[RMDB]
RNA sequence: GGGAACGACUCGAGUAGAGUCGAAAAGAUAUGGAUAUAUAGACAGCUGCGAAGUAGGUCGGAAACGACCUAUGGAGCUGCUAUGAUAUCCUAAGUCAAAAGCGCAAGGACUUCGGUCCUUGCGCAACUCAUUUAUGUUCUUCGGAACAUAAAUGAGAAAAGAAACAACAACAACAAC
Reactivity to 2A3 in 0.01 (KOAc 150mM, MgCl2 10mM, bicine 150mM(pH8.5), 24C), signal-to-noise 2, nucleotides 027 to 126: g000a010u040a020u090g010g000a000u000a000u000a010u040a090g280a300c060a040g110c050u300g300c110g000a000a000g000u010a000g020g000u010c000g000g000a010a010a010c010g000a000c010c000u000a010u000g000g000a000g010c000u010g000c010u010a000u050g120a020u010a010u030c000c000u000a040a000g000u010c010a020a010a150a150g020c000g000c010a010a000g000g030a000c010u090u260c300g070g000u000c000c020u000u000g000c000g010c010a000a000
Reactivity to DMS in 0.01 (KOAc 150mM, MgCl2 10mM, bicine 150mM(pH8.5), 24C), signal-to-noise 2, nucleotides 027 to 126: g010a020u000a240u010g000g000a020u000a040u010a020u000a030g010a240c150a010g020c010u000g010c260g010a140a290g000u000a010g000g020u010c000g020g020a070a070a070c000g010a010c000c020u000a000u000g000g000a020g020c000u000g010c000u000a000u000g000a070u010a010u000c000c000u000a020a110g000u010c010a060a100a150a160g020c000g000c010a020a000g000g000a040c010u000u020c290g020g010u000c000c000u000u000g010c010g040c000a000a010